Structure probing data (2A3 and DMS) for a 177-nucleotide construct.
RNA sequence: GGGAACGACUCGAGUAGAGUCGAAAAACUGCGGUAUUCGUACCGCAGUACAUAAAAAGGAUAAAAUACCACUAGCCCGAAACGCAAGCGAGCACUACUGGCGCAAGAACCACUUCGGUGGUUCUAAAGAACUGAUUACUUUCGAGUAAUCAGUUCUAAAAGAAACAACAACAACAAC
Reactivity to 2A3 in 0.01 (KOAc 150mM, MgCl2 10mM, bicine 150mM(pH8.5), 24C), signal-to-noise 3, nucleotides 027 to 126: a000c010u010g000c010g000g010u020a020u020u050c170g030u070a020c000c020g000c000a000g000u030a000c000a010u300a020a100a000a010a000g030g010a030u130a140a180a060a020u200a120c000c010a030c070u050a040g030c000c020c030g050a100a100a000c050g000c060a020a070g030c000g080a020g040c020a010c040u120a020c030u090g100g000c030g000c060a040a000g000a010a000c010c000a000c000u040u050c130g120g010u010g000g000u000u020c000u010a010a020
Reactivity to DMS in 0.01 (KOAc 150mM, MgCl2 10mM, bicine 150mM(pH8.5), 24C), signal-to-noise 3, nucleotides 027 to 126: a030c010u000g000c000g020g010u000a020u000u010c180g030u000a010c000c010g000c000a000g000u000a010c060a100u000a020a090a080a100a100g010g000a120u010a060a070a070a110u000a080c040c000a070c050u000a090g030c030c030c000g000a070a100a050c070g020c060a060a060g010c060g000a060g000c060a070c040u000a050c110u000g020g020c060g000c100a120a020g000a010a010c000c000a010c010u000u010c190g030g020u000g000g000u000u000c000u000a020a100
DMS adducts were read by reverse transcription with MarathonRT. Values cover nucleotides 27 to 126.